The record gives the reactivity of an RNA of 177 nucleotides to 2A3 and DMS.
The DMS profile rests on 2,398 reads.
Source: RMDB library TTRDES, as collected in RNAgym.
The reactions ran in a buffer of 150 mM KOAc, 10 mM MgCl2 and 150 mM bicine (pH 8.5), at 24 C.
RNA sequence: GGGAACGACUCGAGUAGAGUCGAAAAGAUAUGGACCCAGGGUGGAGCUCAUGGUCGGAAACGACCAUCGAGCGAUGAAACCCGGGUCCUAAGUCAAAACCGAUGCGUGCGUUCGCGCACGCAUCGGCUGAUGCAAUAUCUUCGGAUAUUGCAUCAGAAAAGAAACAACAACAACAAC
Reactivity to 2A3 in 0.01 (KOAc 150mM, MgCl2 10mM, bicine 150mM(pH8.5), 24C), signal-to-noise 1, nucleotides 027 to 126: g000a010u020a000u010g000g020a000c020c110c160a300g050g020g040u040g040g010a000g010c000u020c000a010u000g000g020u000c010g020g020a030a000a000c000g010a010c000c000a020u000c110g000a000g000c000g010a170u010g010a000a020a000c000c000c030g000g000g010u000c000c010u000a000a000g000u010c000a060a040a030a040c010c000g000a010u040g040c050g140u020g110c040g060u060u170c300g040c010g070c230a000c020g000c030a020u000c000g000g000
Reactivity to DMS in 0.01 (KOAc 150mM, MgCl2 10mM, bicine 150mM(pH8.5), 24C), signal-to-noise 1, nucleotides 027 to 126: g010a010u000a020u000g010g000a000c000c000c000a140g030g000g000u000g010g010a010g040c000u010c020a010u000g000g000u000c000g040g000a010a000a030c000g000a020c000c000a020u000c150g070a010g000c000g020a070u010g010a150a300a030c000c010c000g020g010g020u000c000c000u000a000a030g000u000c010a090a080a100a270c000c010g000a000u000g000c000g000u000g030c000g020u000u010c290g020c020g000c000a010c000g000c000a000u000c000g000g000